[RMDB]
RNA sequence: GGGAACGACUCGAGUAGAGUCGAAAAUUAAUGAGGACCAAAUGGCUGUAAAGCCCGUAAUGCUCGAAAUGGUCCUAAACAGCCAAAUCGGGCAAAUCGAGCUAUCCCAACGACAGCGACAAAACAAAGCAAUUUAAAAGUUCGCUUUUAAAUUGCUAAAAGAAACAACAACAACAAC
Reactivity to DMS in 0.01 (KOAc 150mM, MgCl2 10mM, bicine 150mM(pH8.5), 24C), signal-to-noise 3, nucleotides 027 to 126: u010u000a120a060u000g000a110g010g000a110c040c060a100a110a110u010g000g000c010u010g000u000a080a150a040g000c000c000c050g020u000a090a170u000g000c000u000c000g000a000a040a300u000g040g010u000c020c020u040a020a050a130c280a300g000c030c030a010a040a290u000c040g010g010g020c000a010a060a110u000c000g000a020g000c000u000a090u000c010c000c000a070a040c210g000a010c000a010g020c000g030a090c110a050a080a080a080c170a070a060
Reactivity to 2A3 in 0.01 (KOAc 150mM, MgCl2 10mM, bicine 150mM(pH8.5), 24C), signal-to-noise 1, nucleotides 027 to 126: u030u020a040a150u120g040a030g130g070a010c000c000a070a000a140u100g070g000c030u000g000u070a210a000a080g020c090c010c000g020u000a070a070u040g010c020u010c000g020a000a010a070u020g000g000u010c020c000u000a000a000a020c000a000g000c000c000a040a020a040u020c010g010g000g000c020a000a020a040u170c030g000a000g010c010u010a050u130c000c000c000a010a020c020g100a010c000a000g010c020g030a060c050a020a060a070a020c040a030a190

Structure probing data (DMS and 2A3) for a 177-nucleotide construct. Values cover nucleotides 27 to 126. Source: RMDB library M2PK90, as collected in RNAgym.